An RNA of 177 nucleotides, treated with 2A3 and read out base by base. It was measured as part of the RMDB library OK1LIB. For 2A3, 595 sequencing reads were counted. 2A3 is a SHAPE reagent: it acylates the 2'-hydroxyl of flexible nucleotides of all four kinds. Conditions: 150 mM KOAc, 10 mM MgCl2 and 150 mM bicine (pH 8.5), 24 C.

RNA sequence: GGGAACGACUCGAGUAGAGUCGAAAAGUGUAGCGCCACAACACCGCCGCAUGCUCGUCGUAGAGCGCCUGCAUCAAGGCGGCUUCAGCCGCUCCACCGCCAGCAACGCGAGCCACUCGAUCACCUCUGCCCCUCACGGUUUCGACCGUGAGGGGCAAAAAGAAACAACAACAACAAC
Reactivity to 2A3 in 0.01 (KOAc 150mM, MgCl2 10mM, bicine 150mM(pH8.5), 24C), signal-to-noise 1, nucleotides 027 to 126: g120u150g080u140a030g040c000g000c000c020a010c010a030a100c090a020c000c040g090c020c020g060c000a020u010g010c000u000c110g080u010c000g170u150a020g000a060g020c030g030c030c010u040g000c000a000u060c050a140a030g050g000c010g000g090c040u040u010c020a110g000c010c030g000c020u000c040c000a040c030c000g000c000c080a000g000c030a010a020c080g020c000g030a050g040c000c000a000c030u010c000g040a040u100c000a040c000c030u050c020